[RMDB]
An RNA of 177 nucleotides, treated with 2A3 and DMS and read out base by base. Source: RMDB library TTRDEL, as collected in RNAgym. 2A3 adducts were read by reverse transcription with SuperScript II with manganese. Conditions: 150 mM KOAc, 10 mM MgCl2 and 150 mM bicine (pH 8.5), 24 C.
RNA sequence: GGGAACGACUCGAGUAGAGUCGAAAAGAUAUGGAUUAUAACGAAUCACCAUUGCGACGAAGUCGGAAACGACAGAGCAAUGCGUGACUAUUAUAAUCCUAAGUCAAAACGGCUGUUCGCAGCCGAAUCUAUUACAGUACUUCGGUACUGUAAUAGAAAAAGAAACAACAACAACAAC
Reactivity to 2A3 in 0.01 (KOAc 150mM, MgCl2 10mM, bicine 150mM(pH8.5), 24C), signal-to-noise 7, nucleotides 027 to 126: g020a010u070a030u150g000g000a010u020u000a000u010a050a040c100g070a240a300u010c000a000c000c010a000u000u030g040c060g130a280c060g060a300a020g000u010c000g010g060a050a070a040c010g010a000c010a010g030a000g000c000a010a010u020g050c130g040u000g010a000c010u010a010u030u000a000u000a000a000u000c000c000u010a090a010g050u010c020a010a010a110a170c020g010g010c000u020g050u130u130c300g000c140a000g000c000c000g010a000a040
Reactivity to DMS in 0.01 (KOAc 150mM, MgCl2 10mM, bicine 150mM(pH8.5), 24C), signal-to-noise 8, nucleotides 027 to 126: g010a040u000a300u000g000g010a000u000u000a010u010a010a010c080g010a080a160u000c000a010c010c010a010u000u000g000c000g010a140c240g000a100a120g000u000c000g010g000a100a070a160c000g010a010c000a050g000a150g010c000a010a010u000g000c230g020u000g000a000c040u000a120u000u000a000u000a010a010u000c000c000u010a040a090g010u000c030a050a060a110a180c020g000g000c000u010g020u000u010c180g020c010a020g000c000c000g010a040a040